[RMDB]
RNA sequence: GGGAACGACUCGAGUAGAGUCGAAAAGCUAUGGUGCAACUCUUUAAGGCAAUAACGAACUAAUUCUAAGCAAGUAAUGGAGAAAUGCCAGGGCCACUAUCUAGCCAUAAUAGUGCUUGACAGUAUGAGAAUCUGCUACCCUUCGGGGUAGCAGAAAGGAUUUAAAUUGGUUCGCCAAUUUAAAUCCAAAAGAAACAACAACAACAAC
Reactivity to DMS in 0.01 (KOAc 150mM, MgCl2 10mM, bicine 150mM(pH8.5), 24C), signal-to-noise 2, nucleotides 027 to 156: g000c040u000a040u000g020g010u000g000c040a100a080c050u010c030u010u000u000a110a110g020g010c030a090a120u000a090a120c070g000a070a140c070u000a090a120u000u000c070u000a060a140g010c020a050a110g020u010a080a070u020g000g010a150g030a060a090a130u000g000c020c020a050g010g010g000c010c050a010c010u000a000u000c030u000a140g010c110c080a050u000a060a100u000a110g000u010g000c030u000u000g010a120c030a070g050u010a070u020g000a150g000a120a170u010c010u000g000c000u020a020c000c000c000u010u010c300g060g030g020g010u000a010g000c000a000g000a000a020a100
Reactivity to 2A3 in 0.01 (KOAc 150mM, MgCl2 10mM, bicine 150mM(pH8.5), 24C), signal-to-noise 3, nucleotides 027 to 156: g020c030u030a010u080g010g000u030g040c040a110a200c040u060c090u050u160u140a110a070g020g000c020a070a050u100a120a030c070g040a030a040c040u060a100a050u120u080c040u120a080a070g030c040a000a090g040u110a090a060u140g030g000a040g040a030a080a030u050g010c000c000a010g000g000g000c030c010a010c010u020a040u060c000u040a010g010c000c000a020u030a230a080u030a140g100u050g040c020u030u040g020a020c040a030g060u080a120u160g130a140g050a110a070u010c010u000g020c000u010a000c000c000c000u000u030c150g000g010g000g010u010a000g000c000a000g000a000a000a000
Source information:
An RNA of 207 nucleotides, treated with DMS and 2A3 and read out base by base. The 2A3 profile rests on 1,396 reads. The reactions ran in a buffer of 150 mM KOAc, 10 mM MgCl2 and 150 mM bicine (pH 8.5), at 24 C. It was measured as part of the RMDB library M2RFPK.